RNA sequence: GGGAACGACUCGAGUAGAGUCGAAAAGACCCCAGAACAAUCUGGGAAGCAUGAGAGCACUGUCUUCACUAGUGAAAGGCCCCAGUCCUGGCCUCCAUAUUCAGCCUUCACUCCCUGCUUGUUCUUCCUGGAUAGGUUCACUCUGCUCUCUAAAUAAAUAGAGAAAGUCUUUCGAGACUUUCUCUAUAAAAGAAACAACAACAACAAC
Reactivity to 2A3 in 0.01 (KOAc 150mM, MgCl2 10mM, bicine 150mM(pH8.5), 24C), signal-to-noise 1, nucleotides 027 to 156: g050a040c010c000c000c010a020g030a050a040c020a040a050u020c000u030g000g000g000a010a040g000c060a060u080g030a050g010a010g060c040a040c150u050g050u130c070u140u100c060a030c100u050a010g070u010g080a140a040a010g000g020c000c000c000c020a020g070u070c060c100u030g020g040c020c070u060c010c030a060u080a160u120u120c030a010g020c020c020u030u040c010a050c050u040c000c000c000u020g040c000u010u030g010u050u040c000u010u010c010c000u000g000g020a020u030a080g030g000u000u020c010a010c050u100c030u080g090c000u000c020u010c110u170a020a090a000u300a040a090